[RMDB]
RNA sequence: GGGAACGACUCGAGUAGAGUCGAAAAGCCAAGCUGAUUCGCUGGCACAAGGAAGACGGCGACCAGCUCACCAAACUGCGCACCACGAUCGAGCAGCUGCGCGCCGAGCGUGCCGAGCUGAUCAAGCAGCGCGACCGCAUCGCCAACGACACGAUCACCCGCCUUUUAAGUUCGCUUAAAAGGCGGGAAAAGAAACAACAACAACAAC
Reactivity to 2A3 in 0.01 (KOAc 150mM, MgCl2 10mM, bicine 150mM(pH8.5), 24C), signal-to-noise 2, nucleotides 027 to 156: g070c010c020a050a020g000c000u010g050a110u070u050c030g000c000u000g040g030c030a020c050a080a080g150g040a060a030g060a020c020g000g010c050g090a170c010c010a020g010c000u020c040a020c010c090a090a070a050c050u080g000c020g020c110a050c080c050a100c130g050a060u150c030g010a030g000c080a000g000c020u090g030c030g020c000g000c010c060g030a040g040c010g020u010g000c000c000g020a010g000c040u050g000a060u060c050a030a000g030c050a000g010c010g000c000g050a050c020c010g030c020a060u090c010g050c090c040a130a050c060g040a080c020a000c110g030a020u070c000a020
Structure probing data (2A3) for a 207-nucleotide construct. 2A3 adducts were read by reverse transcription with SuperScript II with manganese. Conditions: 150 mM KOAc, 10 mM MgCl2 and 150 mM bicine (pH 8.5), 24 C.